[RMDB]
Annotation
The record gives the reactivity of an RNA of 207 nucleotides to 2A3. 2A3 adducts were read by reverse transcription with SuperScript II with manganese. For 2A3, 998 sequencing reads were counted. Reactivities are rounded to 0.1 and cut off at 0 and 3. The RNA was probed in 150 mM KOAc, 10 mM MgCl2 and 150 mM bicine (pH 8.5) at 24 C.
RNA sequence: GGGAACGACUCGAGUAGAGUCGAAAAGAGAAGGGUUCGCCCUUCUCAAAAAGCGUACUACAACUGCAUCCGCAUAACGAAUAGCCUCCCAAAUAGGAGGCUACUAUUAUGAACUACGGAUGGUUGUAUCGCAAAAACAAUGCUUUCGAGCAUUGAAGUCUAGAGCACUAUUCGUAGUGCUCUAGACAAAAGAAACAACAACAACAAC
Reactivity to 2A3 in 0.01 (KOAc 150mM, MgCl2 10mM, bicine 150mM(pH8.5), 24C), signal-to-noise 2, nucleotides 027 to 156: g100a000g000a010a020g000g000g010u070u120c160g150c010c000c050u000u070c090u060c080a020a000a000a040a000g040c060g020u120a080c030u000a000c000a010a000c020u160g110c030a000u010c000c010g020c030a000u010a010a010c090g050a300a300u000a020g000c000c000u000c000c040c010a130a240a170u300a130g000g000a010g000g010c000u000a010c000u000a000u000u000a000u000g010a040a020c060u090a020c140g000g000a000u010g020g020u000u000g000u000a000u300c010g000c010a060a000a030a100a000c000a000a000u000g020c010u000u220u130c260g090a000g000c030a030u080u050g030a090a040